Chemical mapping of a 177-nucleotide RNA with DMS. Reactivities are given for positions 27 through 126. Values are in units of 0.01, from 0 to 300, in steps of 10. It was measured as part of the RMDB library OK2TST. The reactions ran in a buffer of 150 mM KOAc, 10 mM MgCl2 and 150 mM bicine (pH 8.5), at 24 C.
[RMDB]
RNA sequence: GGGAACGACUCGAGUAGAGUCGAAAAUUGGAUACCUGUUUAAACGCAAUGCUUCGAUUUCUGGUGCAGAAGUUGGAUGCCAGGGAGAAGUUGGUUCCGCGUGUUCUAUGGCUGCUGCUGGAUUAUGCAUGCCGUGGAGUUUCGACUCCACGGCAUGAAAAGAAACAACAACAACAAC
Reactivity to DMS in 0.01 (KOAc 150mM, MgCl2 10mM, bicine 150mM(pH8.5), 24C), signal-to-noise 1, nucleotides 027 to 126: u000u000g010g010a090u000a080c060c030u000g010u000u000u020a040a120a070c120g030c040a060a080u000g010c030u000u010c060g000a120u000u000u000c020u000g010g020u000g020c090a050g010a020a090g020u000u020g000g020a140u000g000c000c040a040g000g010g000a160g010a020a070g030u000u000g010g010u010u000c050c050g000c090g010u030g020u010u000c010u000a110u000g010g010c010u000g020c030u000g010c050u000g000g000a070u000u000a050u000g010